[RMDB]
RNA sequence: GGGAACGACUCGAGUAGAGUCGAAAAUGAAUCGCAACGAGAUAUUCAACGGCGCGCUGGCAAUCACAAACAUCAUCCUGGAUCUCGACAUCGCCCUGAAGGAGCCCGUCCCCUUUCGCCGGCUCCAGAUGCUCUCCCGUUUCGACGGGAGAGCAUCAAAAGAAACAACAACAACAAC
Reactivity to 2A3 in 0.01 (KOAc 150mM, MgCl2 10mM, bicine 150mM(pH8.5), 24C), signal-to-noise 1, nucleotides 027 to 126: u190g030a010a050u060c080g000c050a020a190c130g150a090g020a130u070a080u060u070c000a120a000c060g000g000c060g030c030g000c110u000g000g000c010a000a040u190c020a030c040a110a140a000c000a030u080c000a000u070c070c000u020g000g000a040u040c030u070c010g030a020c000a010u030c010g050c000c000c000u130g080a070a120g010g060a080g050c000c060c000g080u060c070c000c000c000u000u060u040c090g000c020c020g000g000c000u030c010c040a000
The record gives the reactivity of an RNA of 177 nucleotides to 2A3. Source: RMDB library OK1LIB, as collected in RNAgym.